About this RNA: The data come from the RNA Mapping Database (RMDB), library M2RFPK. The record gives the reactivity of an RNA of 207 nucleotides to DMS and 2A3. The DMS profile rests on 2,146 reads. For 2A3, 1,685 sequencing reads were counted. For 2A3 the reverse transcriptase was SuperScript II with manganese. The RNA was probed in 150 mM KOAc, 10 mM MgCl2 and 150 mM bicine (pH 8.5) at 24 C.
RNA sequence: GGGAACGACUCGAGUAGAGUCGAAAAUAAGCCAAAGGGAUGUCCCGACCGGAGGCCGACAAUCCAGGGAACCGGAUGUCAUCACGUUGUUGCACUACCAGAUGGCAUCUUAAAUCCGAUCUGCAAAAAAAGUCUUACACCUUCGGGUGUAAGACAACACUGUAGACAUGUUCGCAUGUCUACAGUGAAAAGAAACAACAACAACAAC
Reactivity to DMS in 0.01 (KOAc 150mM, MgCl2 10mM, bicine 150mM(pH8.5), 24C), signal-to-noise 1, nucleotides 027 to 156: u010a070a130g030c010c020a020a300a190g010g040g000a110u000g030u000c000c000c000g010a080c000c010g050g020a300g000g060c010c040g050a140c130a090a120u020c050c030a150g000g030g000a050a160c080c050g000g020a030u000g020u000c000a040u000c010a270c200g000u000u000g000u000u010g000c020a120c050u000a080c040c040a100g020a060u000g000g060c010a040u000c010u000u000a080a070a110u010c000c000g020a060u000c030u000g000c050a000a000a070a090a050a080a170g010u000c010u000u010a020c010a020c000c010u000u020c300g050g000g070u000g030u040a000a000g010a000c010a030a070
Reactivity to 2A3 in 0.01 (KOAc 150mM, MgCl2 10mM, bicine 150mM(pH8.5), 24C), signal-to-noise 2, nucleotides 027 to 156: u080a010a030g010c000c000a000a000a000g040g000g020a030u040g020u010c020c010c020g000a000c000c000g010g000a000g010g000c000c010g050a060c040a090a040u110c110c080a060g040g020g010a040a040c030c030g000g000a010u000g010u000c010a010u010c010a030c190g030u020u040g000u040u050g030c090a030c130u130a070c160c070a060g000a000u000g000g030c000a010u020c000u010u030a040a030a030u070c040c010g060a100u040c050u210g020c100a050a060a030a000a000a020a020g000u010c000u000u000a000c000a010c020c000u030u120c220g050g000g000u000g000u010a020a000g000a000c000a000a020